[RMDB]
RNA sequence: GGGAACGACUCGAGUAGAGUCGAAAACACAGGGGUUUGCAGAGAAAUCACCUCCAGAGGACCCCUUCAGCGAACAGAACGAUCGCUUCACGCGGUGGGAGCAAGACCAUAGCGAUAGGAAGAGAUGAAACCGCGUUGUUCGCAACGCGGAAAAGAAACAACAACAACAAC
Reactivity to DMS in 0.01 (KOAc 150mM, MgCl2 10mM, bicine 150mM(pH8.5), 24C), signal-to-noise 3, nucleotides 027 to 129: c080a120c210a000g000g000g000g000u000u010u040g020c300a150g010a010g000a090a040a090u000c210a170c170c000u000c030c080a070g030a130g020g030a030c030c010c010c030u080u010c150a110g010c010g020a000a000c050a080g030a070a090c120g010a030u030c010g000c030u000u040c090a090c020g020c030g070g120u070g030g060g030a120g020c120a060a070g000a090c020c090a030u010a000g040c060g040a110u040a000g020g040a020a010g020a080g020a050u090g010a100a060a060
Reactivity to 2A3 in 0.01 (KOAc 150mM, MgCl2 10mM, bicine 150mM(pH8.5), 24C), signal-to-noise 4, nucleotides 027 to 129: c060a020c030a020g000g000g000g000u010u040u110g050c060a000g010a000g010a010a260a020u130c050a100c050c000u020c000c010a060g000a050g150g060a050c030c020c000c000u080u060c030a010g030c000g010a040a010c010a050g070a060a020c060g000a060u010c020g020c000u100u110c040a060c040g030c030g020g010u030g020g040g020a120g140c060a040a030g060a050c000c010a040u070a020g000c000g040a050u100a050g120g040a030a020g030a000g010a040u120g010a110a020a000